[RMDB]
RNA sequence: GGGAACGACUCGAGUAGAGUCGAAAACUCUUGUUAGGUGAAAGUUGAUGGUCGCCGUGUCAGUUCAUGCCUUUGAAAACAGUUCUAUGUAGUAGGGAGUCGAGAACCUAUGAGAGUUAGAACUUGCUAUGCCUUGGACUCUUCGGAGUCCAAGGAACGAAAUAUGAGUGUUCGCACUCAUAUUUCGAAAAGAAACAACAACAACAAC
Reactivity to DMS in 0.01 (KOAc 150mM, MgCl2 10mM, bicine 150mM(pH8.5), 24C), signal-to-noise 5, nucleotides 027 to 156: c020u000c030u000u000g010u000u010a070g040g020u000g000a070a070a100g010u000u000g020a120u010g020g020u000c020g040c000c020g030u010g000u000c020a100g010u000u000c100a070u000g000c020c020u000u000u010g010a090a060a060a050c040a050g000u000u000c010u000a070u000g000u010a300g020u000a040g010g020g000a110g020u000c140g010a260g000a100a110c010c000u000a020u000g000a250g010a180g010u010u000a040g000a020a080c020u000u000g040c020u000a100u000g020c000c010u000u000g010g000a030c010u000c000u000u000c290g050g010a030g010u000c000c000a000a000g000g010a000a030
Reactivity to 2A3 in 0.01 (KOAc 150mM, MgCl2 10mM, bicine 150mM(pH8.5), 24C), signal-to-noise 5, nucleotides 027 to 156: c020u010c010u030u080g070u060u110a070g030g020u060g060a130a090a070g040u060u060g040a060u080g040g030u030c030g010c030c010g020u020g030u020c040a020g010u040u040c040a040u110g030c010c040u070u100u130g130a090a080a020a020c040a030g010u010u000c020u030a000u100g020u030a040g000u000a010g030g020g050a070g060u070c050g030a020g020a170a050c010c000u000a030u040g040a080g010a010g070u030u030a010g000a010a010c010u020u060g000c020u080a070u190g030c000c000u000u000g000g000a000c000u000c010u030u050c210g090g000a010g000u000c000c000a000a000g000g000a000a000
Notes: The data come from the RNA Mapping Database (RMDB), library M2RFPK. Structure probing data (DMS and 2A3) for a 207-nucleotide construct. Reactivities are given for positions 27 through 156. For DMS, 20,016 sequencing reads were counted. The 2A3 profile rests on 5,234 reads. DMS adducts were read by reverse transcription with MarathonRT.